Background: Conditions: 150 mM KOAc, 10 mM MgCl2 and 150 mM bicine (pH 8.5), 24 C. Structure probing data (2A3 and DMS) for a 177-nucleotide construct. For 2A3, 17,297 sequencing reads were counted.

[RMDB]
RNA sequence: GGGAACGACUCGAGUAGAGUCGAAAACGAUUAGCAUUCGUGCUAAUCGAAUCUGGUAGUACCUAUCUCUAUUACCUGUAGUGGCCAACGUCCGGACAGAGAAUCGAGUCCUGUUCGCAGGACUCAAACGUCAGAAAGUAUUCGUACUUUCUGACGUAAAAGAAACAACAACAACAAC
Reactivity to 2A3 in 0.01 (KOAc 150mM, MgCl2 10mM, bicine 150mM(pH8.5), 24C), signal-to-noise 8, nucleotides 027 to 126: c010g000a000u000u000a000g000c010a010u000u060c220g110u070g000c000u000a000a010u000c000g010a000a080u060c040u030g080g010u040a040g020u040a070c010c020u070a090u100c040u000c010u050a090u110u100a080c020c010u050g040u090a080g070u070g100g020c030c040a090a050c080g050u020c030c020g020g030a040c030a040g100a010g060a100a100u200c120g000a010g010u000c010c000u010g020u030u020c210g000c050a000g010g000a000c000u000c000a000a010
Reactivity to DMS in 0.01 (KOAc 150mM, MgCl2 10mM, bicine 150mM(pH8.5), 24C), signal-to-noise 6, nucleotides 027 to 126: c020g000a010u000u000a010g000c000a050u000u020c230g030u000g010c000u010a000a000u000c000g000a060a050u010c080u000g000g000u000a050g010u000a140c070c040u000a080u000c040u000c040u000a060u010u010a060c050c040u010g010u010a090g010u000g010g010c040c030a060a080c110g010u000c030c030g000g010a060c090a070g000a100g000a090a100u010c170g000a020g000u000c000c000u000g000u000u010c180g020c010a010g000g000a010c000u000c000a010a060

It was measured as part of the RMDB library M2PK50. 2A3 adducts were read by reverse transcription with SuperScript II with manganese.